The data come from the RNA Mapping Database (RMDB), library OK2TRN. An RNA of 177 nucleotides, treated with DMS and 2A3 and read out base by base. DMS adducts were read by reverse transcription with MarathonRT. The DMS profile rests on 1,729 reads. For 2A3, 2,172 sequencing reads were counted.
[RMDB]
RNA sequence: GGGAACGACUCGAGUAGAGUCGAAAAGCACGGAGACAUGCACGGAAACGUAGACGGAGGCCCCAUGACGAACGUGGCUGUCCGAGGCCUUCGUAUUUGACUGGUAAUUCAGUCGUUAGGACAGCUACGGUAAUGGGAUCUUCGGAUCCCAUUACCGAAAAGAAACAACAACAACAAC
Reactivity to DMS in 0.01 (KOAc 150mM, MgCl2 10mM, bicine 150mM(pH8.5), 24C), signal-to-noise 2, nucleotides 027 to 126: g030c080a090c090g000g040a120g010a120c090a070u000g000c080a110c010g010g010a050a100a070c060g030u000a070g010a050c000g000g010a050g020g000c020c000c030c020a160u010g030a110c200g010a090a080c100g030u000g000g000c000u000g000u000c010c000g000a100g010g000c010c050u000u000c020g030u000a000u000u010u000g030a010c000u000g030g000u000a100a120u000u010c010a000g000u000c000g010u010u000a110g020g000a030c000a020g000c000u000a090
Reactivity to 2A3 in 0.01 (KOAc 150mM, MgCl2 10mM, bicine 150mM(pH8.5), 24C), signal-to-noise 2, nucleotides 027 to 126: g050c030a000c060g050g020a040g050a070c050a040u060g040c000a050c030g050g010a070a040a050c100g040u040a050g060a080c000g000g000a000g020g020c030c020c000c070a060u130g130a060c110g020a210a010c020g020u020g020g000c000u000g010u020c020c020g040a060g030g000c000c010u030u000c000g000u070a160u080u080u150g010a000c000u000g020g030u090a020a080u190u140c000a000g010u000c010g040u050u120a020g000g020a000c000a000g000c000u020a020